Chemical mapping of a 177-nucleotide RNA with DMS and 2A3. Values cover nucleotides 27 to 126.
[RMDB]
RNA sequence: GGGAACGACUCGAGUAGAGUCGAAAAUCUCAGGUCUUCGGACCUGAGAAAAAUAAAAUAAGCUAAUCGUCAAAGCACUACACUGUAGAUAAAGACGUCAAAAAAGGACAAUCUUCGGAUUGUCCAAGAUUAACGUAGAGUUCGCUCUACGUUAAUCAAAAGAAACAACAACAACAAC
Reactivity to DMS in 0.01 (KOAc 150mM, MgCl2 10mM, bicine 150mM(pH8.5), 24C), signal-to-noise 4, nucleotides 027 to 126: u010c000u010c000a000g000g020u000c010u000u020c170g040g000a010c010c000u000g000a010g000a000a010a040a100a060u020a060a050a050a060u010a120a140g000c010u000a160a160u000c010g000u000c000a110a030a010g020c020a300c010u000a010c010a100c160u000g020u010a000g000a050u010a020a100a150g010a000c010g020u030c200a000a030a070a070a120a090g000g000a010c000a010a000u000c000u000u010c240g020g010a010u000u010g000u000c000c000a000a020
Reactivity to 2A3 in 0.01 (KOAc 150mM, MgCl2 10mM, bicine 150mM(pH8.5), 24C), signal-to-noise 4, nucleotides 027 to 126: u010c000u010c000a010g010g000u000c000u020u100c210g110g020a000c010c000u010g000a000g010a000a010a000a000a000u030a010a010a010a010u260a160a060g010c030u030a050a120u070c000g000u000c020a200a160a010g030c030a020c030u010a010c300a060c150u300g000u010a010g000a020u040a030a050a020g010a010c010g030u080c050a040a040a010a070a040a100g000g000a000c000a010a000u000c000u040u110c230g100g000a000u000u000g000u030c000c000a010a000